[RMDB]
RNA sequence: GGGAACGACUCGAGUAGAGUCGAAAACAUGACAUACAAAUUACUAAUGAGAGCUACAAUAAUUAUGUACCCUCAUAUGUUAAACCUGAUAGUGUGUCUACCAGCGAUUUAGGUAGUCUCAUUGAUUAUACCCCAUCCUUCGGGAUGGGGAAAAGAAACAACAACAACAAC
Reactivity to 2A3 in 0.01 (KOAc 150mM, MgCl2 10mM, bicine 150mM(pH8.5), 24C), signal-to-noise 5, nucleotides 027 to 129: c010a050u120g100a000c010a010u250a000c050a030a080a030u300u080a100c020u140a080a020u000g000a010g000a030g020c050u010a000c000a050a100u190a160a160u220u180a100u080g010u050a040c010c030c000u000c040a020u010a010u030g030u030u060a070a050a030c020c020u040g100a130u030a110g030u000g000u010g000u000c000u000a020c000c010a010g100c090g210a130u010u080u210a050g010g010u010a020g040u030c000u000c050a020u040u030g020a030u020u050a030u150a110
Reactivity to DMS in 0.01 (KOAc 150mM, MgCl2 10mM, bicine 150mM(pH8.5), 24C), signal-to-noise 2, nucleotides 027 to 129: c270a090u020g010a040c070a070u070a040c070a030a090a150u070u000a060c070u060a120a070u050g020a020g020a050g020c300u020a030c020a000a040u030a080a070u040u070a070u050g010u000a030c080c030c000u020c000a070u030a050u030g020u020u000a000a110a070c110c130u070g020a160u050a070g000u010g010u000g000u080c040u020a000c080c000a100g070c190g020a050u060u140u000a070g040g000u010a020g000u010c040u000c000a010u000u120g030a120u000u040a080u070a150

Structure probing data (2A3 and DMS) for a 170-nucleotide construct. DMS adducts were read by reverse transcription with MarathonRT.